Chemical mapping of a 207-nucleotide RNA with DMS and 2A3. In probing experiments dimethyl sulfate is read out at A N1 and C N3, which are open when not base-paired. Source: RMDB library M2RFPK, as collected in RNAgym. For 2A3 the reverse transcriptase was SuperScript II with manganese. Reactivities are given for positions 27 through 156.
RNA sequence: GGGAACGACUCGAGUAGAGUCGAAAAAGUUAGGUUCGCUAUGGUGCAACUCUUUAAGGCAAUAACGAACUAAUUCUAAGCAAGUAAUGGAGAAAUGCCAGGGUCACUAUCUAGCCAUAAUAGUCCUGUAAGUGACUUAGAUUCGUCUAAGUCACAAACUAGCGUAAUGGUUCGCCAUUACGCUAGUAAAAGAAACAACAACAACAAC
Reactivity to DMS in 0.01 (KOAc 150mM, MgCl2 10mM, bicine 150mM(pH8.5), 24C), signal-to-noise 3, nucleotides 027 to 156: a060g010u000u000a060g020g010u000u000c020g030c020u000a050u000g030g030u000g000c030a110a140c080u010c090u000u010u000a080a090g010g000c020a100a060u000a040a090c010g020a060a100c030u000a040a110u010u000c050u000a090a160g010c040a060a150g010u010a080a080u000g020g000a090g020a080a090a110u010g010c000c010a080g020g020g000u020c050a040c020u010a030u000c030u000a120g020c060c030a040u000a050a060u010a080g000u000c030c030u000g010u000a060a140g010u000g010a030c000u000u000a000g010a050u010u010c300g020u000c000u000a000a000g030u000c000a000c000a020a040
Reactivity to 2A3 in 0.01 (KOAc 150mM, MgCl2 10mM, bicine 150mM(pH8.5), 24C), signal-to-noise 6, nucleotides 027 to 156: a000g080u060u030a030g020g050u020u030c050g030c030u050a010u060g090g010u040g020c040a050a140c050u060c080u090u230u150a110a080g040g000c030a050a060u130a120a060c060g040a010a000c030u020a020a040u070u060c050u140a090a030g020c050a080a060g050u150a120a050u120g080g010a090g030a110a070a010u050g010c000c010a020g010g020g000u020c010a000c020u010a030u150c010u020a030g010c000c000a020u040a110a030u030a090g040u020c000c010u050g040u070a150a020g000u000g000a000c000u000u000a000g000a010u020u010c070g020u000c100u000a000a000g000u000c000a000c000a000a000